[RMDB]
RNA sequence: GGGAACGACUCGAGUAGAGUCGAAAAUGACGACAUCGAAUACACCUCACUAACUUGUGCAAGUUUGCUGCUGUCAUUCGCUGUUGGGUCAUCAGCAGACAUUGAACAGCAAUUCUAUAUUGGAGAGUACUCUGCCUUACUUCGGUAAGGCAGAGUAAAAAGAAACAACAACAACAAC
Reactivity to DMS in 0.01 (KOAc 150mM, MgCl2 10mM, bicine 150mM(pH8.5), 24C), signal-to-noise 2, nucleotides 027 to 126: u020g040a060c000g010a100c020a050u000c030g000a070a040u000a040c090a090c080c080u000c030a060c150u010a110a090c070u000u000g010u000g040c090a060a090g020u020u000u000g010c050u000g010c090u000g000u000c000a010u020u030c110g040c030u000g000u010u000g010g010g000u000c110a060u000c030a020g020c040a030g000a090c080a090u010u000g000a040a070c050a010g010c030a040a040u000u000c010u000a040u010a080u000u000g000g010a160g000a140g000
Reactivity to 2A3 in 0.01 (KOAc 150mM, MgCl2 10mM, bicine 150mM(pH8.5), 24C), signal-to-noise 1, nucleotides 027 to 126: u070g050a060c000g000a000c000a060u080c010g000a000a070u140a090c070a000c000c000u000c010a050c040u100a120a040c000u080u050g080u030g070c110a140a010g000u050u020u090g020c000u030g000c000u030g070u020c010a060u020u060c030g020c010u000g000u160u060g070g020g050u080c070a080u040c000a110g040c040a000g000a040c040a100u050u090g050a070a030c010a000g070c000a020a020u140u000c010u050a100u020a030u200u190g060g000a060g000a030g150
Annotation
Chemical mapping of a 177-nucleotide RNA with DMS and 2A3. 2A3 adducts were read by reverse transcription with SuperScript II with manganese. High 2A3 reactivity points to a flexible backbone, as in loops and unpaired stretches. DMS adducts were read by reverse transcription with MarathonRT. The 2A3 profile rests on 733 reads.